RNA sequence: GGGAACGACUCGAGUAGAGUCGAAAAUUUUUAAGUAUCUACUUCUUGAAGAACGUGUCACGAACCCAGUCGCGAUCACGGCGGUAAAUGCGCGAUGCGGUUGGCAGAGUCCGCUUCGUCAGGGUACCGAUGGCGUGCAGACGGUGAAACACAGCCAAGAAUAGUAUGCUUUCGAGCAUACUAUUCUAAAAGAAACAACAACAACAAC
Reactivity to 2A3 in 0.01 (KOAc 150mM, MgCl2 10mM, bicine 150mM(pH8.5), 24C), signal-to-noise 3, nucleotides 027 to 156: u070u090u050u050u080a100a030g020u050a140u040c040u060a080c010u080u090c030u070u100g040a090a070g030a090a030c080g020u030g030u040c020a020c050g050a050a050c030c010c020a060g050u070c010g010c030g040a020u080c070a010c060g100g020c010g050g030u060a050a060a040u200g020c090g000c000g040a000u010g010c010g000g030u030u040g080g010c050a040g010a020g140u000c010c010g030c000u030u010c000g020u020c010a020g110g060g030u010a020c000c020g040a050u090g070g020c010g000u040g020c000a020g010a060c010g040g000u030g030a010a030a000c020a000c020a020g040c030c060a020
Reactivity to DMS in 0.01 (KOAc 150mM, MgCl2 10mM, bicine 150mM(pH8.5), 24C), signal-to-noise 2, nucleotides 027 to 156: u040u010u000u000u010a000a130g020u010a050u000c030u000a060c080u010u000c030u000u000g020a090a120g010a070a070c070g030u010g020u020c010a040c030g010a040a160c100c010c040a230g010u000c000g030c010g000a080u010c030a080c010g000g010c010g030g000u000a030a060a090u000g010c080g060c010g020a070u000g010c000g020g000u000u000g000g000c090a130g000a200g010u000c000c010g020c020u000u000c040g030u000c040a100g000g010g030u000a030c010c030g000a080u010g010g000c020g040u030g020c020a110g010a120c040g010g020u000g010a120a080a070c030a040c050a100g040c000c010a050